Notes
The record gives the reactivity of an RNA of 207 nucleotides to 2A3 and DMS. For 2A3, 11,402 sequencing reads were counted. For DMS the reverse transcriptase was MarathonRT. For DMS, 20,782 sequencing reads were counted. For 2A3 the reverse transcriptase was SuperScript II with manganese.
RNA sequence: GGGAACGACUCGAGUAGAGUCGAAAAUACCGUCUUCUCCCCGACGGUUUCAAUCCAUAGCAUCACGUUGUGUAGCGUAGGUGGAAGGUAUCGUGUGGUGUAUAAACACCACAUAGUCUCUUAGGGGUCAAGCUGAUAAACUUCGGUUUAUCAGCAACAAAUGUAAUAGCUUCGGCUAUUACAUUUGAAAAGAAACAACAACAACAAC
Reactivity to 2A3 in 0.01 (KOAc 150mM, MgCl2 10mM, bicine 150mM(pH8.5), 24C), signal-to-noise 9, nucleotides 027 to 156: u080a000c000c000g010u010c020u210u050c040u100c000c000c000c020g000a000c000g000g020u010u030u070c060a030a060u040c020c010a070u070a150g060c010a020u060c010a010c040g090u120u100g170u110g140u300a040g010c010g020u030a130g010g030u020g020g040a050a050g040g010u110a050u150c060g010u000g000u000g000g030u010g060u020a100u100a240a210a020c000a000c000c000a000c000a010u000a000g020u000c010u000c010u110u150a040g000g020g010g000u040c070a090a030g000c000u000g000a000u000a000a000a000c000u030u030c090g030g000u000u000u000a000u000c000a000g000c000a000a000
Reactivity to DMS in 0.01 (KOAc 150mM, MgCl2 10mM, bicine 150mM(pH8.5), 24C), signal-to-noise 5, nucleotides 027 to 156: u000a030c000c000g000u000c010u000u000c050u000c010c010c020c100g010a030c010g010g010u000u000u010c090a100a130u000c010c020a160u000a150g010c030a100u000c030a070c040g010u000u000g020u010g020u000a140g020c040g030u000a100g040g030u010g010g000a090a080g010g010u000a060u000c070g040u000g010u000g010g040u000g010u000a150u010a130a150a120c000a020c000c000a010c000a000u000a030g010u000c040u000c020u000u000a230g000g010g020g010u000c040a060a190g030c000u010g000a010u000a000a010a010c000u000u000c300g060g020u000u000u000a000u000c000a010g020c000a020a040